[RMDB]
RNA sequence: GGGAACGACUCGAGUAGAGUCGAAAAGGGGUCUCCAUGCAUUCCGCAUAGGCUGAUGACCCACAGCUGAAGCCUCCACGGCUGUGGCAAGGCCGCAUAGGAAUGUCAUGGAGACGGAGGCACCCAAAAGACCGGGAGUGUUCGCACUCCCGGUCAACUUUCACACUAGUUUCGACUAGUGUGAAAGAAAAGAAACAACAACAACAAC
Reactivity to 2A3 in 0.01 (KOAc 150mM, MgCl2 10mM, bicine 150mM(pH8.5), 24C), signal-to-noise 2, nucleotides 027 to 156: g050g000g000g000u010c010u020c010c010a010u000g020c000a010u000u020c020c010g050c220a250u270a230g010g000c030u040g010a300u020g010a040c000c000c000a000c000a000g000c000u020g010a080a000g020c000c010u000c010c010a010c010g000g010c010u000g000u000g020g010c020a070a070g020g000c020c010g030c070a140u210a120g010g000a010a010u000g010u060c000a000u000g000g010a000g000a000c010g000g000a000g010g000c010a050c010c010c010a000a120a040a020g010a000c000c000g010g010g000a000g000u050g020u120u230c250g060c070a000c000u000c000c000c000g000g000u000c000a000a000
Reactivity to DMS in 0.01 (KOAc 150mM, MgCl2 10mM, bicine 150mM(pH8.5), 24C), signal-to-noise 1, nucleotides 027 to 156: g000g040g080g010u000c000u020c000c010a030u000g000c020a060u000u000c000c020g030c160a200u000a090g000g070c020u010g000a050u000g010a060c300c000c010a040c010a020g010c030u010g000a070a190g040c030c010u000c020c000a300c000g000g000c000u000g000u000g000g000c000a040a050g000g020c000c000g030c290a130u020a080g040g000a050a020u010g010u000c060a020u000g020g020a000g000a010c000g000g040a070g060g020c030a120c020c030c000a110a110a120a200g000a040c000c010g030g030g020a020g070u000g070u000u010c300g000c000a040c010u000c000c000c000g000g050u000c000a000a040